[RMDB]
An RNA of 177 nucleotides, treated with DMS and 2A3 and read out base by base. The data come from the RNA Mapping Database (RMDB), library M2PK50. For 2A3 the reverse transcriptase was SuperScript II with manganese. Reactivities are given for positions 27 through 126. The RNA was probed in 150 mM KOAc, 10 mM MgCl2 and 150 mM bicine (pH 8.5) at 24 C.
RNA sequence: GGGAACGACUCGAGUAGAGUCGAAAACUCGGUUAAUUCGUUAACCGAGACUUCUUAAACAUCUUUUCAACACAUAGAUGGUAAAUAUUCAAAGAUGAUCGAAUGCGAUAAACUUCGGUUUAUCGAAGCUAACAAUCAUAUUCGUAUGAUUGUUAGCAAAAGAAACAACAACAACAAC
Reactivity to DMS in 0.01 (KOAc 150mM, MgCl2 10mM, bicine 150mM(pH8.5), 24C), signal-to-noise 8, nucleotides 027 to 126: c010u000c000g000g000u000u000a010a020u000u010c160g020u000u000a000a010c000c000g010a010g000a040c070u000u000c010u000u000a070a110a140c030a010u000c000u000u000u000u000c090a070a090c210a070c210a080u000a060g000a050u000g010g000u010a060a050a070u000a080u000u000c110a060a060a090g010a050u000g000a090u010c120g000a070a060u010g010c020g000a010u010a010a020a010c000u000u010c170g010g010u000u000u000a010u000c000g000a050a080
Reactivity to 2A3 in 0.01 (KOAc 150mM, MgCl2 10mM, bicine 150mM(pH8.5), 24C), signal-to-noise 9, nucleotides 027 to 126: c000u000c000g000g000u020u010a020a020u070u060c120g020u040u010a000a010c000c000g000a000g000a000c010u040u040c000u020u120a140a120a030c000a010u000c010u040u060u100u110c110a130a050c030a020c020a170u140a100g090a100u040g030g020u070a060a120a070u220a100u110u130c060a040a040a030g080a070u110g020a040u100c080g070a130a060u190g040c010g000a000u010a020a020a010c000u020u050c210g060g000u000u000u010a010u000c000g000a020a000